Source information
The record gives the reactivity of an RNA of 177 nucleotides to 2A3 and DMS. Values are in units of 0.01, from 0 to 300, in steps of 10. Conditions: 150 mM KOAc, 10 mM MgCl2 and 150 mM bicine (pH 8.5), 24 C. For 2A3 the reverse transcriptase was SuperScript II with manganese. High DMS reactivity at an A or C suggests that its Watson-Crick edge is free. The data come from the RNA Mapping Database (RMDB), library OK1LIB. The DMS profile rests on 7,319 reads.

RNA sequence: GGGAACGACUCGAGUAGAGUCGAAAAAUCGAGGACAUUUUCUGCAUAACAUUUACCCCUGUGCCUUUAUAGAUUCUCCUGAAUUUAGAUCAACUCAGAUGCACAAAGGUGAAAAAUUCCAGGUCACAUAAUGACAUACCUUCGGGUAUGUCAUUAUAAAAGAAACAACAACAACAAC
Reactivity to 2A3 in 0.01 (KOAc 150mM, MgCl2 10mM, bicine 150mM(pH8.5), 24C), signal-to-noise 5, nucleotides 027 to 126: a000u050c040g010a020g030g030a010c040a050u070u080u040u020c060u090g050c030a050u060a150a070c030a060u160u090u200a160c000c000c000c010u040g010u040g020c010c000u080u100u020a160u060a060g110a070u080u030c030u010c020c030u040g040a060a070u010u090u130a080g050a150u050c020a010a040c030u000c050a010g030a040u090g030c020a000c000a090a080a010g040g010u050g050a030a050a030a040a030u090u010c060c010a010g010g010u050c010a030c000
Reactivity to DMS in 0.01 (KOAc 150mM, MgCl2 10mM, bicine 150mM(pH8.5), 24C), signal-to-noise 4, nucleotides 027 to 126: a040u010c060g010a070g020g010a070c090a060u000u010u010u000c030u000g030c070a060u010a090a110c150a090u020u010u000a120c040c020c030c030u020g000u000g010c040c040u010u010u020a070u010a050g010a090u010u000c000u000c100c060u010g010a050a050u010u020u020a070g000a110u000c060a040a050c080u000c070a050g000a060u010g010c040a060c070a020a050a060g000g010u030g010a030a050a050a050a150u030u020c050c030a090g000g000u000c080a070c120